RNA sequence: GGGAACGACUCGAGUAGAGUCGAAAAGGGAACCAGGAGCCGCAUGAUGGUUGAGAGCAUAGGUUCUGAAAUUAGGCUGCCUGCUUUUAAAUCUCAGCACUGCUGCUUCCAAGCUUUGUGACAUUUGGCGAGUUUACACAACCUCUCUCUGCCUCAAGCGGUAAAUGGAUUUCGAUCCAUUUACCGCAAAAGAAACAACAACAACAAC
Reactivity to 2A3 in 0.01 (KOAc 150mM, MgCl2 10mM, bicine 150mM(pH8.5), 24C), signal-to-noise 2, nucleotides 027 to 156: g000g030g010a010a010c040c000a040g030g010a010g050c020c030g020c060a060u170g030a120u170g180g010u020u030g040a070g000a000g010c050a110u170a130g050g000u120u040c030u080g090a160a130a090u080u140a120g020g070c080u030g020c050c010u030g010c000u110u090u050u100a110a260a240u060c030u000c050a040g030c010a020c000u040g000c000u000g050c010u050u000c020c050a030a000g010c040u060u050u070g060u100g030a070c030a130u080u060u070g040g020c050g000a030g030u050u180u220a060c100a000c010a000a120c080c000u050c000u030c000u030c020u110g060c000c020u100c070a110a040

Overview:
Structure probing data (2A3) for a 207-nucleotide construct. The 2A3 profile rests on 609 reads. The RNA was probed in 150 mM KOAc, 10 mM MgCl2 and 150 mM bicine (pH 8.5) at 24 C.